[RMDB]
RNA sequence: GGGAACGACUCGAGUAGAGUCGAAAAUGUACGGCCAUGGAACGCUAUCAAAGGGAAGGCUUGUUCUGUUACAAGCAAAAUCAGAAUUGGCAUUCAAAAUUCAACACUCGCCACUGUUCGAUACAUCAAAUCAAUUGAUCUUCGGAUCAAUUGAUUUAAAAGAAACAACAACAACAAC
Reactivity to DMS in 0.01 (KOAc 150mM, MgCl2 10mM, bicine 150mM(pH8.5), 24C), signal-to-noise 6, nucleotides 027 to 126: u010g010u010a050c050g010g010c020c030a060u010g010g010a050a060c110g020c060u000a050u000c100a030a100a100g010g010g000a200a090g010g010c010u000u000g000u000u000c120u000g000u010u000a050c120a030a070g010c140a060a030a060a140u000c040a070g000a060a050u000u000g000g000c030a060u000u000c060a040a030a040a110u000u010c080a050a080c080a040c080u000c070g010c040c020a040c120u000g000u000u000c040g010a120u000a050c120a060u000c120
Reactivity to 2A3 in 0.01 (KOAc 150mM, MgCl2 10mM, bicine 150mM(pH8.5), 24C), signal-to-noise 3, nucleotides 027 to 126: u060g020u030a030c040g000g000c030c000a020u030g070g000a130a050c050g000c080u080a070u250c080a130a060a020g050g000g020a010a040g050g000c000u000u000g020u050u030c050u090g130u130u090a060c040a110a080g020c000a000a050a010a170u070c010a000g050a030a040u050u030g020g000c030a010u060u090c030a020a090a040a100u100u040c020a040a040c010a020c070u040c040g040c030c000a030c060u040g050u090u060c040g020a040u050a120c030a050u140c060